Overview:
Structure probing data (2A3 and DMS) for a 170-nucleotide construct. For 2A3, 15,515 sequencing reads were counted. 2A3 adducts were read by reverse transcription with SuperScript II with manganese. The DMS profile rests on 18,598 reads. 2A3 is a SHAPE reagent: it acylates the 2'-hydroxyl of flexible nucleotides of all four kinds. The data come from the RNA Mapping Database (RMDB), library 15KLIB.
RNA sequence: GGGAACGACUCGAGUAGAGUCGAAAAGAGAUUUCCCGAAAGCUGGAGACUCGCGGAAUUUCAUUCAAGAAGAAGGUAACGGAGAAAGGAGCGGGCCUCCCGAUCCGAGUGGUCCACGGCGUAUCAAUGGCCUAGGUCUUCGGACCUAGGAAAAGAAACAACAACAACAAC
Reactivity to 2A3 in 0.01 (KOAc 150mM, MgCl2 10mM, bicine 150mM(pH8.5), 24C), signal-to-noise 8, nucleotides 027 to 129: g140a000g020a040u010u000u030c000c000c010g000a140a080a010g040c060u070g010g000a020g010a030c020u030c020g030c040g080g120a020a020u050u040u050c060a090u090u060c050a120a100g070a070a000g040a020a020g160g030u130a110a000c030g020g030a040g020a050a030a020g030g010a020g010c020g000g030g010c000c000u020c000c000c000g010a000u000c020c010g030a010g050u100g010g020u020c040c000a040c070g010g000c030g020u060a030u130c060a070a100u100g070g000
Reactivity to DMS in 0.01 (KOAc 150mM, MgCl2 10mM, bicine 150mM(pH8.5), 24C), signal-to-noise 6, nucleotides 027 to 129: g000a160g000a130u000u000u000c010c010c050g030a100a090a090g030c000u000g020g040a100g040a070c040u020c070g060c110g030g010a170a050u030u060u020c060a090u000u080c080a090a090g020a060a100g020a010a020g020g000u020a090a150c120g030g000a000g020a090a130a070g000g000a210g030c000g000g000g000c010c000u040c030c020c060g000a110u000c080c040g020a100g050u040g040g010u000c010c070a040c100g020g010c120g050u000a070u010c100a090a130u000g000g000